[RMDB]
RNA sequence: GGGAACGACUCGAGUAGAGUCGAAAAACGGCCUAUAUAACGACCAGUGCAUGCAUUGUAAGCCAAUUUAAUCAUGGCGCUUAUGGGCGUAUAAAUGCCCCAAUUAUGUCGCAUAUACACACCAUAAAGUUCAAUUUCACGUAUCUUACGCUCGGCAAUCCCAAUGGGUGUUCGCACCCAUUGGGAUAAAAGAAACAACAACAACAAC
Reactivity to 2A3 in 0.01 (KOAc 150mM, MgCl2 10mM, bicine 150mM(pH8.5), 24C), signal-to-noise 2, nucleotides 027 to 156: a010c070g080g010c000c020u050a040u060a030u060a210a130c060g090a150c020c000a010g010u010g110c090a040u020g020c020a000u000u140g010u250a040a080g000c000c020a100a040u200u230u110a170a040u170c160a090u060g010g000c010g020c030u030u030a060u040g010g000g000c000g000u030a000u070a050a100a000u090g010c010c010c000c010a120a110u300u090a030u120g090u090c000g000c040a000u010a000u080a070c010a000c030a030c070c000a000u060a040a130a000g030u060u090c130a070a160u010u140u190c010a050c070g000u030a070u040c040u090u100a070c060g020c050u170c090g140g020c040a040
Structure probing data (2A3) for a 207-nucleotide construct.
Conditions: 150 mM KOAc, 10 mM MgCl2 and 150 mM bicine (pH 8.5), 24 C.
Source: RMDB library OK3TST, as collected in RNAgym.